[RMDB]
RNA sequence: GGGAACGACUCGAGUAGAGUCGAAAAGAUAUGGAACGUGGAUAGCAACAGCUGAUGCAUCGGAAACGAUGUUUCAGACAUGCUACACGUUCCUAAGUCAAAAUCUACCUCCUUCGGGAGGUAGAAACUUUAGCAGACUGUUCGCAGUCUGCUAAAGAAAAGAAACAACAACAACAAC
Reactivity to 2A3 in 0.01 (KOAc 150mM, MgCl2 10mM, bicine 150mM(pH8.5), 24C), signal-to-noise 2, nucleotides 027 to 126: g000a000u000a010u050g000g000a010a000c000g020u030g050g300a300u070a090g000c030a010a300c190a300g010c020u000g000a010u000g020c010a010u010c010g000g000a000a000a000c010g010a010u000g040u040u010u000c000a000g070a020c060a110u120g010c000u010a020c000a010c000g000u000u000c000c000u000a000a000g020u000c020a090a060a040a170u020c000u000a010c000c010u040c030c010u050u090c280g110g000g000a000g030g020u000a010g000a010a010a010
Reactivity to DMS in 0.01 (KOAc 150mM, MgCl2 10mM, bicine 150mM(pH8.5), 24C), signal-to-noise 1, nucleotides 027 to 126: g000a010u000a040u010g000g020a000a000c000g020u000g000g010a280u010a010g020c010a070a110c170a200g010c000u010g000a020u020g010c000a010u000c000g010g000a010a000a020c000g010a010u010g010u020u010u000c000a000g010a040c150a090u000g000c000u010a060c010a010c000g000u000u000c000c000u000a000a060g000u000c000a090a070a120a170u010c020u000a010c000c000u000c000c000u000u000c300g050g000g020a030g010g000u000a010g000a010a050a090